RNA sequence: GGGAACGACUCGAGUAGAGUCGAAAAGAAGAGAAUAAGCGCGGAUAUGUCUGUCGGUAGAGCAGCAGGACCGACACCUGCGAGUAUAGGGAUCAAGACCCUGUUCGCGCAAAGAUUGAAGUAGAAGCCCUAGUAGUGGUUUCGACCACUACUAGGGAAAAGAAACAACAACAACAAC
Reactivity to DMS in 0.01 (KOAc 150mM, MgCl2 10mM, bicine 150mM(pH8.5), 24C), signal-to-noise 3, nucleotides 027 to 126: g000a200a080g010a150g000a190a070u000a120a110g010c020g030c000g030g000a000u000a030u010g000u030c020u010g000u000c010g020g000u000a050g000a100g020c120a210g010c000a040g000g000a040c030c030g000a040c030a060c050c010u000g020c050g020a140g030u020a060u050a020g000g000g000a070u030c260a040a070g010a050c030c040c190u000g000u010u000c000g000c000g000c000a040a080a070g010a200u030u010g000a010a190g000u010a060g000a210a200g000
Reactivity to 2A3 in 0.01 (KOAc 150mM, MgCl2 10mM, bicine 150mM(pH8.5), 24C), signal-to-noise 4, nucleotides 027 to 126: g100a000a000g100a010g040a050a050u160a200a070g000c000g000c020g020g030a010u010a020u190g110u020c060u050g050u040c020g060g090u120a060g010a040g090c050a020g000c000a020g040g040a140c020c010g020a010c010a070c020c000u030g030c000g000a010g020u100a030u080a070g070g030g000a050u210c120a120a020g090a080c010c010c030u000g000u030u000c000g000c000g000c000a010a020a020g080a070u070u160g040a030a040g010u110a020g010a100a010g020